An RNA of 177 nucleotides, treated with 2A3 and DMS and read out base by base. Values are in units of 0.01, from 0 to 300, in steps of 10. The RNA was probed in 150 mM KOAc, 10 mM MgCl2 and 150 mM bicine (pH 8.5) at 24 C. For DMS the reverse transcriptase was MarathonRT. The DMS profile rests on 1,758 reads.
RNA sequence: GGGAACGACUCGAGUAGAGUCGAAAACUACAGGACUAACAAUCUUAUCAUAAGAGCCUCCUUUAGGUAAUUUAAUAACAGGUUUUUCUAAACUUCCGAAGUCUGCUGAUAAGUCAACACUUGAACGUAGUUACAAUCUGUUCGCAGAUUGUAACUAAAAAGAAACAACAACAACAAC
Reactivity to 2A3 in 0.01 (KOAc 150mM, MgCl2 10mM, bicine 150mM(pH8.5), 24C), signal-to-noise 2, nucleotides 027 to 126: c000u040a010c030a060g040g070a050c050u100a060a050c110a100a070u000c010u040u030a020u100c020a100u050a170a120g040a050g110c000c030u070c010c050u050u030u070a020g010g000u030a070a060u100u190u090a150a130u180a130a040c040a030g070g050u000u000u000u010u080c050u080a060a080a060c060u090u000c010c010g030a030a020g040u050c020u020g020c020u020g040a030u010a070a000g030u030c030a020a020c040a030c050u020u080g070a080a000c050g070
Reactivity to DMS in 0.01 (KOAc 150mM, MgCl2 10mM, bicine 150mM(pH8.5), 24C), signal-to-noise 3, nucleotides 027 to 126: c010u000a050c140a070g010g000a080c080u000a060a060c100a080a120u000c020u010u000a050u010c060a060u010a120a070g000a150g040c060c050u000c110c070u000u000u000a040g020g000u010a040a100u000u010u000a080a100u010a060a090c140a120g010g000u000u000u010u030u020c100u010a050a040a030c060u000u010c080c090g000a060a080g010u000c020u000g010c080u000g010a060u000a020a030g020u010c090a040a030c100a060c050u000u000g010a040a080c180g000